[RMDB]
RNA sequence: GGGAACGACUCGAGUAGAGUCGAAAAGAUAUGGAGCUAUCUCCUUCGUGAGUAAUAAGACAGAACGGCACUCGGAAACGAGUGAAGUUCAAUGACGUUACUCACGAAGGAGAGUAGCUCCUAAGUCCCUAGUAGGUGUCUUCGGACACCUACUAGGAAAAGAAACAACAACAACAAC
Reactivity to DMS in 0.01 (KOAc 150mM, MgCl2 10mM, bicine 150mM(pH8.5), 24C), signal-to-noise 1, nucleotides 027 to 126: g010a140u000a210u010g000g000a000g090c000u000a000u000c030u010c000c000u000u000c000g030u000g010a000g040u010a030a010u010a190a170g000a220c190a110g000a010a000c010g020g040c020a010c000u000c000g040g020a170a150a270c030g020a020g000u000g010a010a000g010u000u000c000a100a120u030g000a230c300g000u000u000a000c000u000c000a020c000g020a000a000g020g000a010g000a040g000u000a020g010c020u000c000c010u000a030a110g010u010c060
Background: An RNA of 177 nucleotides, treated with DMS and read out base by base. Source: RMDB library TTRINS, as collected in RNAgym. Reactivities are given for positions 27 through 126.